[RMDB]
RNA sequence: GGGAACGACUCGAGUAGAGUCGAAAAUUUCUUCAUUCUUCGAAUCUAUAUUCAGACAUAUCGAUGCAUCUUUGAGAUCUGUCACCUUGUAUGAUCCUGUCGCCAUUUGAGUAUUGAUCAAGUCAAGAAGAGGGAAUUGUUUCGACAAUUCCCUCUUAAAAGAAACAACAACAACAAC
Reactivity to DMS in 0.01 (KOAc 150mM, MgCl2 10mM, bicine 150mM(pH8.5), 24C), signal-to-noise 2, nucleotides 027 to 126: u010u010u000c030u000u010c090a170u000u000c020u000u000c060g000a060a060u000c050u000a030u010a050u000u000c020a070g010a120c130a090u000a080u000c070g010a130u000g000c120a100u000c040u000u020u010g010a120g010a060u000c080u000g010u010c030a070c130c050u010u010g000u000a050u000g030a080u000c030c060u000g020u010c030g010c080c070a070u000u000u000g000a050g000u010a060u000u000g000a040u010c060a060a050g000u000c160a030a070g000
Reactivity to 2A3 in 0.01 (KOAc 150mM, MgCl2 10mM, bicine 150mM(pH8.5), 24C), signal-to-noise 1, nucleotides 027 to 126: u020u000u000c040u120u100c030a120u100u010c040u110u060c040g060a060a020u030c020u040a050u050a040u080u060c010a040g030a080c020a080u100a020u090c030g090a020u030g020c020a050u000c000u060u060u090g170a170g000a030u080c020u100g050u020c010a070c060c040u020u060g030u090a060u080g050a020u020c010c010u040g020u060c010g000c020c010a100u120u010u070g000a000g000u010a010u020u060g020a020u060c040a060a000g180u100c020a040a070g110